The record gives the reactivity of an RNA of 177 nucleotides to 2A3 and DMS. It was measured as part of the RMDB library OK2TRN. For 2A3, 8,019 sequencing reads were counted. The RNA was probed in 150 mM KOAc, 10 mM MgCl2 and 150 mM bicine (pH 8.5) at 24 C.
RNA sequence: GGGAACGACUCGAGUAGAGUCGAAAAACAUGAGGUUGAUGGCAUUGGAGAUGCUAGCUGAACAAGGAGCAGCGACAUACAUUGACUUGACAGCAGAAGGAUUCAACCGAUUCCUCCUACCUGUCGACAGUCCUUAGAAGUUCGCUUCUAAGGACUGAAAAGAAACAACAACAACAAC
Reactivity to 2A3 in 0.01 (KOAc 150mM, MgCl2 10mM, bicine 150mM(pH8.5), 24C), signal-to-noise 4, nucleotides 027 to 126: a000c060a080u160g080a060g080g010u040u050g020a030u020g030g000c100a050u030u100g070g020a110g000a050u040g000c010u030a090g110c020u020g030a080a020c070a180a060g050g000a020g040c030a010g020c020g030a010c010a020u120a020c020a020u020u070g020a020c000u030u120g000a000c000a000g010c000a010g010a050a000g060g000a000u040u000c070a190a150c160c030g000a010u030u000c000c000u000c000c000u010a060c000c010u000g020u030c010g000a030
Reactivity to DMS in 0.01 (KOAc 150mM, MgCl2 10mM, bicine 150mM(pH8.5), 24C), signal-to-noise 6, nucleotides 027 to 126: a120c060a100u010g000a070g000g030u010u000g010a070u000g000g010c070a030u000u010g010g010a180g030a060u000g010c020u000a050g000c030u000g000a100a070c170a140a050g000g000a080g000c030a040g000c020g010a120c060a040u000a060c100a040u010u000g010a070c100u000u000g000a030c020a000g050c300a020g000a050a010g010g000a030u010u000c000a110a160c300c300g000a050u000u000c000c000u000c000c000u000a110c260c020u000g020u000c010g020a180